Source: RMDB library OK1LIB, as collected in RNAgym.
The record gives the reactivity of an RNA of 177 nucleotides to 2A3 and DMS.
For 2A3, 14,298 sequencing reads were counted.
The RNA was probed in 150 mM KOAc, 10 mM MgCl2 and 150 mM bicine (pH 8.5) at 24 C.
Reactivities are given for positions 27 through 126.
[RMDB]
RNA sequence: GGGAACGACUCGAGUAGAGUCGAAAAUCUUAGCACCCCUUACGAAGUACGCCUAUUGUAAGAUCUCGCAGCAUCUAUGCCGCCUGUGUCGCUGCACGACCUAACCCAUUUAAAGCGAUUGGGCACCUACACUGAUACGUUUCGACGUAUCAGUGUAAAAAGAAACAACAACAACAAC
Reactivity to 2A3 in 0.01 (KOAc 150mM, MgCl2 10mM, bicine 150mM(pH8.5), 24C), signal-to-noise 9, nucleotides 027 to 126: u050c020u050u070a030g020c020a070c000c000c000c010u030u030a040c040g060a070a000g020u040a020c040g020c020c010u100a130u120u180g040u050a080a040g030a110u020c020u020c040g020c010a040g010c010a060u020c020u080a060u140g020c000c020g040c000c010u070g040u020g010u070c010g000c020u030g030c020a020c030g060a050c010c010u030a040a050c000c000c020a030u080u130u160a120a110a010g060c050g040a040u040u050g000g010g000c010a040c000c010
Reactivity to DMS in 0.01 (KOAc 150mM, MgCl2 10mM, bicine 150mM(pH8.5), 24C), signal-to-noise 5, nucleotides 027 to 126: u000c040u010u010a140g000c040a100c010c000c030c020u020u030a090c080g000a080a070g020u020a050c090g000c020c000u010a060u020u010g000u010a030a070g030a060u010c020u020c050g020c010a070g030c080a040u030c070u010a070u010g000c060c030g020c010c020u000g020u010g000u020c030g030c020u000g000c030a100c040g000a050c030c020u000a020a130c020c000c000a120u040u020u030a050a070a080g020c080g020a050u010u020g000g000g000c080a090c120c090
Notes: 2A3 adducts were read by reverse transcription with SuperScript II with manganese.